RNA sequence: GGGAACGACUCGAGUAGAGUCGAAAAUUAUGGAGUGUGAGUGAUGAGGAGCUUGCUCUUUUAAGCUCAUAUUACGUAAUAAGUUAAUACUGGAGCGAGAAUAAUUUAAAUCAUUUCAUCAUAACCCAUGAAUGUAUCAGUUCGCUGAUACAUUCAUAAAAGAAACAACAACAACAAC
Reactivity to DMS in 0.01 (KOAc 150mM, MgCl2 10mM, bicine 150mM(pH8.5), 24C), signal-to-noise 7, nucleotides 027 to 126: u010u000a010u010g000g000a040g010u010g020u000g000a010g010u000g010a220u030g000a040g010g000a020g010c030u050u000g000c010u000c000u000u000u000u000a070a300g000c010u010c010a020u000a010u000u000a060c020g010u000a010a010u010a070a150g020u010u020a050a100u020a070c120u010g000g000a060g000c040g010a060g000a060a070u020a060a100u010u020u020a040a090a100u010c060a030u010u000u000c010a050u020c120a060u020a070a120c010c010c020
Reactivity to 2A3 in 0.01 (KOAc 150mM, MgCl2 10mM, bicine 150mM(pH8.5), 24C), signal-to-noise 9, nucleotides 027 to 126: u040u020a010u020g020g010a040g030u020g010u000g010a020g020u060g030a100u090g020a030g060g000a010g030c030u060u080g040c010u010c000u020u040u010u030a050a010g010c000u010c010a000u020a010u020u020a010c010g020u020a020a050u060a140a040g040u050u110a080a020u050a100c040u060g070g010a030g020c030g020a030g060a080a070u170a100a090u070u110u200a090a120a040u070c020a030u020u080u040c030a070u010c010a020u050a070a070c000c000c000